This 207-nucleotide RNA was probed chemically with 2A3 and DMS.
Reactivities are given for positions 27 through 156.
2A3 adducts were read by reverse transcription with SuperScript II with manganese.
Conditions: 150 mM KOAc, 10 mM MgCl2 and 150 mM bicine (pH 8.5), 24 C.
For DMS, 12,294 sequencing reads were counted.
It was measured as part of the RMDB library M2RFPK.
RNA sequence: GGGAACGACUCGAGUAGAGUCGAAAAAUACACCAGCAGUAGCACUCAGCGACCGUCACAACAAGGUUGUGCUGGUAUCCGACGGUCGUAUAGCCCUGUCUUGCAGGUUGCCUUGCACUGACGUGCCACACCAUUUACAGAUUCGUCUGUAAAUGAAACCUAUAUUACUAUUCGUAGUAAUAUAGGUAAAAGAAACAACAACAACAAC
Reactivity to 2A3 in 0.01 (KOAc 150mM, MgCl2 10mM, bicine 150mM(pH8.5), 24C), signal-to-noise 8, nucleotides 027 to 156: a000u130a020c050a010c030c000a000g000c010a020g030u130a010g000c010a010c040u060c050a030g030c010g010a000c000c000g000u010c020a040c030a210a130c050a210a120g080g010u050u030g050u050g020c010u000g010g010u020a070u060c040c070g000a000c000g000g000u010c010g000u030a060u110a020g020c000c000c010u030g020u080c090u080u200g010c010a010g030g000u140u190g050c020c010u060u080g020c040a040c070u020g010a030c070g020u010g010c010c000a090c000a020c010c010a000u010u000u000a000c010a000g020a020u010u100c110g090u000c090u000g000u000a000a000a000u000g000a080a010
Reactivity to DMS in 0.01 (KOAc 150mM, MgCl2 10mM, bicine 150mM(pH8.5), 24C), signal-to-noise 4, nucleotides 027 to 156: a090u000a090c040a240c040c020a070g020c050a100g020u000a080g010c030a100c050u010c040a130g010c010g010a020c000c010g010u000c010a190c070a100a080c080a090a100g010g010u010u010g020u000g010c000u000g010g030u000a060u000c080c020g010a050c010g030g010u000c020g020u010a070u000a100g010c000c030c010u000g010u010c060u000u010g010c040a060g020g010u000u000g030c030c100u000u000g020c050a110c060u000g010a100c130g020u000g010c000c030a070c040a140c140c010a020u000u000u000a010c000a020g000a050u000u010c300g010u010c010u000g010u010a000a010a010u000g000a070a070